[RMDB]
RNA sequence: GGGAACGACUCGAGUAGAGUCGAAAAGCACGGUAUGAAGGCGCAAAACAGAAGUAGAGGACCCAUUUUCCCACGGGUCUUCGUGGGGUAAUAUGAAUACGCUCUGUAUGGCUUAUUGUCAUAGUGGCGCGAUUAUUAGUUUCGACUAAUAAUCGCGAAAAGAAACAACAACAACAAC
Reactivity to 2A3 in 0.01 (KOAc 150mM, MgCl2 10mM, bicine 150mM(pH8.5), 24C), signal-to-noise 2, nucleotides 027 to 126: g040c020a010c060g040g010u090a060u130g070a100a020g040g000c040g020c090a030a020a030a040c040a010g100a110a000g120u210a010g010a020g020g010a020c000c000c000a010u100u030u040u010c010c010c000a010c030g020g000g000u000c030u000u000c000g000u050g000g000g030g010u120a090a030u130a130u250g070a100a040u080a060c040g040c060u040c020u060g070u070a040u060g020g000c020u100u110a090u230u300g040u030c020a010u050a120g110u080g080g010
Reactivity to DMS in 0.01 (KOAc 150mM, MgCl2 10mM, bicine 150mM(pH8.5), 24C), signal-to-noise 3, nucleotides 027 to 126: g000c040a050c030g050g020u000a040u010g000a020a080g000g000c030g000c080a050a020a090a080c090a040g010a030a070g020u020a070g000a040g000g000a020c010c000c000a300u000u010u020u000c000c000c010a190c160g000g010g010u010c020u000u000c000g020u070g020g010g010g010u020a030a110u000a060u010g010a120a110u000a110c030g010c030u000c020u000g000u000a030u020g020g000c020u020u020a110u000u020g000u020c020a010u000a040g020u000g010g020
Overview
Chemical mapping of a 177-nucleotide RNA with 2A3 and DMS. Reactivities are rounded to 0.1 and cut off at 0 and 3. The reactions ran in a buffer of 150 mM KOAc, 10 mM MgCl2 and 150 mM bicine (pH 8.5), at 24 C. 2A3 adducts were read by reverse transcription with SuperScript II with manganese. Reactivities are given for positions 27 through 126.